[RMDB]
RNA sequence: GGGAACGACUCGAGUAGAGUCGAAAAGCAAUUUCCAAAGCGUAUCUGGCAUAUACCAGCUUCGCUUCCAGAGACAUCUACCUGACCAGAGGUAGAGCAGUAGUUUACACUUCUUCACUUGUUCAGACAAUAAAGAAAAUGGGUUUUGAGGAAGCCCCAAUUUGGAGACAUUCGUGUCUCCAAAUUGAAAAGAAACAACAACAACAAC
Reactivity to 2A3 in 0.01 (KOAc 150mM, MgCl2 10mM, bicine 150mM(pH8.5), 24C), signal-to-noise 2, nucleotides 027 to 156: g030c000a040a110u060u010u000c020c000a030a040a000g000c000g000u060a030u010c000u010g060g030c100a180u110a020u090a280c000c000a000g020c050u000u040c000g000c000u040u000c060c040a050g020a010g000a170c010a040u010c000u060a000c000c000u080g130a210c060c040a110g040a010g220g000u010a000g000a000g050c030a010g010u180a010g000u000u180u210a030c070a030c050u070u060c000u040u000c030a040c060u090u090g050u160u150c030a030g070a140c060a130a070u290a230a120a180g160a060a090a070a020u040g000g000g000u000u020u080u120g040a030g030g000a000a000g000c000c000c000
Reactivity to DMS in 0.01 (KOAc 150mM, MgCl2 10mM, bicine 150mM(pH8.5), 24C), signal-to-noise 1, nucleotides 027 to 156: g000c000a150a120u000u000u000c030c010a120a090a100g070c030g010u000a050u000c000u010g010g060c030a230u000a180u000a060c000c000a010g010c080u010u000c000g030c020u000u000c060c010a100g000a180g010a080c060a050u000c030u010a030c020c010u010g010a300c150c080a140g000a060g010g030u000a000g030a020g000c000a140g020u000a030g030u010u000u010a170c080a090c040u000u000c040u020u020c000a100c080u010u000g020u000u010c080a070g010a210c070a030a090u030a020a050a170g000a050a000a100a030u010g030g030g030u000u000u030u000g000a180g010g010a120a020g010c010c010c050